Structure probing data (2A3) for a 177-nucleotide construct. Values cover nucleotides 27 to 126. It was measured as part of the RMDB library OK1LIB.

[RMDB]
RNA sequence: GGGAACGACUCGAGUAGAGUCGAAAACUGCCUCCAGCUCACAUUUGCACUAGUUUCUUUAAUUUUUAAUGCAAAUGAAAUGAGGGUGAUGGGCUGCGAGACUACCGACGUUAGCAUAAUUGAUCGGCCACGCUGAUCACUUCGGUGAUCAGCGUGGAAAAGAAACAACAACAACAAC
Reactivity to 2A3 in 0.01 (KOAc 150mM, MgCl2 10mM, bicine 150mM(pH8.5), 24C), signal-to-noise 1, nucleotides 027 to 126: c000u030g000c000c000u000c020c020a000g000c000u000c000a160c000a010u000u060u100g000c000a000c000u070a030g130u070u050u000c080u000u270u170a060a000u020u020u000u000u300a080a000u010g000c020a000a010a000u060g080a000a090a050u110g070a090g090g070g000u030g010a160u000g000g000g000c000u080g000c000g010a020g000a000c060u080a060c000c000g000a000c010g130u140u030a120g020c180a170u030a170a050u150u170g050a160u000c000g000g000
2A3 adducts were read by reverse transcription with SuperScript II with manganese.
The reactions ran in a buffer of 150 mM KOAc, 10 mM MgCl2 and 150 mM bicine (pH 8.5), at 24 C.